[RMDB]
RNA sequence: GGGAACGACUCGAGUAGAGUCGAAAACAGCCGCGCGAGCAGCGGCCGGGCAGCGGCGCGUCCUGGAGCUCUGGUGCGGAGCCGCGCGCGCAGCCGCCGGCGGCCAAACGGCGGCCGGACGCCACGGCUGCAAGCGAUAUUUCGAUAUCGCUUGCAGAAAAGAAACAACAACAACAAC
Reactivity to DMS in 0.01 (KOAc 150mM, MgCl2 10mM, bicine 150mM(pH8.5), 24C), signal-to-noise 7, nucleotides 027 to 126: c080a120g000c020c010g020c020g000c060g010a110g020c290a130g010c030g010g030c000c020g010g020g010c010a060g010c020g010g020c020g010c020g010u010c060c040u020g040g020a230g010c020u000c010u000g020g030u010g010c090g010g000a060g000c010c010g030c300g000c040g010c000g010c020a040g020c010c060g020c010c000g000g010c010g010g010c010c020a040a280a130c090g000g000c000g010g010c010c000g010g010a090c070g000c010c040a120c120g000g010
Reactivity to 2A3 in 0.01 (KOAc 150mM, MgCl2 10mM, bicine 150mM(pH8.5), 24C), signal-to-noise 4, nucleotides 027 to 126: c010a010g000c000c000g000c040g000c020g060a060g030c060a000g010c040g060g010c020c010g080g100g020c020a050g000c020g040g000c010g000c010g020u080c030c090u170g110g040a090g020c010u020c040u110g270g200u260g190c180g020g000a010g010c010c000g020c000g000c020g000c010g010c030a030g010c000c000g010c010c000g020g020c010g120g010c000c000a120a220a000c030g000g000c000g020g010c000c010g020g030a030c030g020c030c020a050c040g070g020